[RMDB]
RNA sequence: GGGAACGACUCGAGUAGAGUCGAAAAUGGAUUCGACAGGAAUAGGUCGAGCUUAAGUGGCGAGCCGAGGUGGCGAACUCGUUAAAACGCCAUCGCCAAUAACUGGCAAAGAAAACAACAACUUCGCAUUAGCUGCCUAAGCUAGCAAAUGCGGUUCGAACAAAAACAAGUUCGCUUGUUUUUGUUCAAAAGAAACAACAACAACAAC
Reactivity to 2A3 in 0.01 (KOAc 150mM, MgCl2 10mM, bicine 150mM(pH8.5), 24C), signal-to-noise 7, nucleotides 027 to 156: u110g030g030a040u050u030c020g010a010c040a050g130g100a120a120u120a120g130g000u020c020g010a010g000c010u120u100a150a030g030u050g070g020c020g010a010g040c040c010g020a020g000g020u020g000g000c010g000a070a060c020u000c040g090u050u070a020a040a030a040c010g000c000c010a040u060c030g000c000c020a040a090u150a130a050c130u040g000g000c000a040a050a050g070a040a100a020a010c050a010a020c010a020a060c050u120u100c050g000c000a010u010u020a030g000c000u020g020c020c050u070a100a020g020c050u060a010g000c010a030a030a010u010g000c000g040g000u080u090c070
Reactivity to DMS in 0.01 (KOAc 150mM, MgCl2 10mM, bicine 150mM(pH8.5), 24C), signal-to-noise 2, nucleotides 027 to 156: u030g010g030a190u010u000c020g000a050c010a120g000g000a170a140u010a090g010g010u000c000g010a060g020c040u000u010a040a120g000u000g000g020c050g010a130g010c040c010g010a050g020g020u000g010g010c030g010a050a070c080u000c050g040u000u000a050a090a140a170c110g000c000c000a010u000c030g040c000c020a120a180u010a060a040c060u000g020g020c020a060a090a110g040a090a060a180a090c050a050a050c050a050a030c050u000u000c030g040c040a050u000u000a100g000c020u000g010c050c080u020a040a110g020c030u000a070g000c030a010a030a030u000g000c000g030g030u000u010c100